[RMDB]
RNA sequence: GGGAACGACUCGAGUAGAGUCGAAAAAGGGAUAGAUCUAGAGACCUCAAAAUACAUCCUGGCCAAUGUUGGGGACCAGUUCUGCCAGCUCGUAAUGUCUGAGAAGGAGGCCAUGAUGAUGGUGGAGACUUCCAUGCAAUUUCGAUUGCAUGGAAGUAAAAGAAACAACAACAACAAC
Reactivity to 2A3 in 0.01 (KOAc 150mM, MgCl2 10mM, bicine 150mM(pH8.5), 24C), signal-to-noise 2, nucleotides 027 to 126: a000g140g000g020a090u150a110g070a070u110c080u100a080g010a000g070a270c030c000u070c040a080a090a030a010u180a050c010a030u030c000c000u030g000g060c000c030a060a070u170g040u070u020g030g000g020g020a020c000c020a070g060u140u030c040u050g210c000c000a010g020c010u000c020g040u020a080a050u070g030u050c050u050g000a010g020a160a060g020g020a000g030g000c000c000a020u010g010a020u020g010a000u020g010g110u070g040g030a030g050
Reactivity to DMS in 0.01 (KOAc 150mM, MgCl2 10mM, bicine 150mM(pH8.5), 24C), signal-to-noise 4, nucleotides 027 to 126: a110g000g000g000a100u010a060g000a090u010c030u000a130g010a170g020a090c050c030u000c110a110a050a070a110u010a120c060a040u010c010c030u010g000g000c000c010a100a080u010g020u000u000g040g010g010g000a030c040c110a110g020u010u000c010u000g010c020c010a020g010c030u000c090g010u000a050a060u000g010u000c030u000g000a130g000a130a050g000g000a070g010g010c020c020a030u000g000a040u000g000a100u000g000g010u020g000g000a120g010

Chemical mapping of a 177-nucleotide RNA with 2A3 and DMS. Source: RMDB library OK2TST, as collected in RNAgym. Conditions: 150 mM KOAc, 10 mM MgCl2 and 150 mM bicine (pH 8.5), 24 C. Values cover nucleotides 27 to 126. DMS adducts were read by reverse transcription with MarathonRT.